[RMDB]
RNA sequence: GGGAACGACUCGAGUAGAGUCGAAAAAUUGAUUUGAGACGUCGCCUUGCAGUGUUAACUUGGCUCUCAUGAACCUCUUUGAUCUUCCACAAAGGGUAGGCUACGGGUGAAACCUCUUAGGCUAAAAUAGAUAAGAUGUGUUCGCACAUCUUAUCUAAAAAGAAACAACAACAACAAC
Reactivity to 2A3 in 0.01 (KOAc 150mM, MgCl2 10mM, bicine 150mM(pH8.5), 24C), signal-to-noise 2, nucleotides 027 to 126: a010u110u120g010a020u070u060u130g020a020g020a010c080g070u090c030g000c010c030u040u070g020c030a070g030u010g060u240u070a090a080c020u010u030g020g020c010u000c020u020c040a050u090g040a060a080c000c000u030c020u000u000u020g050a050u040c050u100u030c020c010a060c030a050a040a010g040g020g010u020a060g020g000c000u010a010c030g060g050g000u040g110a060a030a030c030c000u010c060u040u080a050g040g030c020u040a040a020a070a160
Reactivity to DMS in 0.01 (KOAc 150mM, MgCl2 10mM, bicine 150mM(pH8.5), 24C), signal-to-noise 4, nucleotides 027 to 126: a090u010u020g010a090u010u000u000g000a070g020a090c170g010u000c090g010c040c010u000u010g010c080a070g030u010g010u000u010a060a090c050u000u010g000g010c050u000c040u010c030a060u000g000a110a120c110c010u000c010u000u000u000g000a070u000c050u010u000c060c050a150c070a040a040a040g010g000g030u000a050g020g020c030u000a040c180g010g010g000u000g000a070a060a120c060c000u010c060u010u000a050g000g000c040u000a040a040a060a120
Structure probing data (2A3 and DMS) for a 177-nucleotide construct. The reactions ran in a buffer of 150 mM KOAc, 10 mM MgCl2 and 150 mM bicine (pH 8.5), at 24 C. For DMS the reverse transcriptase was MarathonRT. 2A3 adducts were read by reverse transcription with SuperScript II with manganese.